[RMDB]
RNA sequence: GGGAACGACUCGAGUAGAGUCGAAAAGUGGUUCUAAUAUGAUGCUGUGAAGCAUCUCCUCACGAGUAGAAUUACUCGUAAUCAGAACCUGGACAGUGAGGAGCUCUUGAGUGAUCAAGAGAGGAUUGUGCAGUGAUGCACAAUCGAACACUGUCAACGAUCCAAGAUAGUUCGCUAUCUUGGAUCGAAAAGAAACAACAACAACAAC
Reactivity to DMS in 0.01 (KOAc 150mM, MgCl2 10mM, bicine 150mM(pH8.5), 24C), signal-to-noise 3, nucleotides 027 to 156: g040u000g000g020u000u000c020u000a040a040u000a120u010g010a030u000g000c000u010g010u010g000a290a060g030c000a000u000c000u000c090c100u000c060a070c030g010a050g030u000a040g010a220a160u010u000a030c000u000c010g040u000a050a030u000c060a020g000a010a010c000c000u020g000g000a040c030a030g020u000g020a120g020g020a300g040c020u000c010u000u010g010a040g000u010g000a300u000c000a040a020g000a030g020a200g010g020a000u000u000g010u000g010c000a030g000u000g000a280u000g020c000a000c000a020a000u010c000g000a080a130c040a020c010u000g000u010c010a080a180
Reactivity to 2A3 in 0.01 (KOAc 150mM, MgCl2 10mM, bicine 150mM(pH8.5), 24C), signal-to-noise 4, nucleotides 027 to 156: g130u060g010g000u020u010c020u030a070a060u130a130u300g020a010u010g010c010u020g030u080g180a050a000g000c000a010u010c010u010c010c000u090c010a000c010g000a000g000u020a020g020a300a250u240u030a030c000u000c000g010u020a010a080u040c060a000g000a010a000c000c020u020g080g000a000c000a010g000u000g010a080g040g090a110g050c000u000c000u010u020g020a030g020u100g030a140u040c000a000a000g000a000g000a000g020g020a010u000u010g000u000g010c000a000g010u030g110a080u020g010c010a010c000a000a000u000c000g000a030a010c000a000c000u010g000u020c000a000a020